[RMDB]
RNA sequence: GGGAACGACUCGAGUAGAGUCGAAAAUACAAUAGCGUAGGGAACCAAGCUAAGAGGUUGGAAGUCCAACGGUAGAGGGCUUGGUUCGCAGCUGCUCUAGAAGAGGUCCCACUCCCUACGGCGCAAACGUCAUGACUAGUUUCGACUAGUCAUGACGAAAAGAAACAACAACAACAAC
Reactivity to 2A3 in 0.01 (KOAc 150mM, MgCl2 10mM, bicine 150mM(pH8.5), 24C), signal-to-noise 2, nucleotides 027 to 126: u120a040c060a010a080u060a070g020c020g090u030a120g060g070g000a000a010c000c000a010a030g000c000u050a070a050g110a050g250g070u030u020g020g020a170a120g180u190c000c000a010a000c000g040g060u100a060g100a150g160g050g040c010u000u020g010g020u010u000c000g000c010a000g000c000u040g010c000u000c020u050a120g040a200a000g040a060g010g050u020c010c000c000a020c020u000c010c000c000u020a050c040g020g010c010g000c030a070a100a030
Reactivity to DMS in 0.01 (KOAc 150mM, MgCl2 10mM, bicine 150mM(pH8.5), 24C), signal-to-noise 2, nucleotides 027 to 126: u040a090c220a100a070u000a020g000c020g000u040a110g030g000g000a010a000c000c000a000a010g020c000u000a090a080g010a070g010g000u000u000g000g020a300a110g000u060c000c010a000a020c000g010g000u000a170g010a110g020g000g010c000u000u000g000g020u000u000c000g000c050a100g010c040u000g010c020u010c100u000a070g010a110a040g000a070g020g000u010c000c000c000a160c020u000c010c000c000u010a080c130g010g000c040g010c140a050a100a120
Structure probing data (2A3 and DMS) for a 177-nucleotide construct. The data come from the RNA Mapping Database (RMDB), library M2PK90. For 2A3, 1,668 sequencing reads were counted. The RNA was probed in 150 mM KOAc, 10 mM MgCl2 and 150 mM bicine (pH 8.5) at 24 C. For DMS the reverse transcriptase was MarathonRT.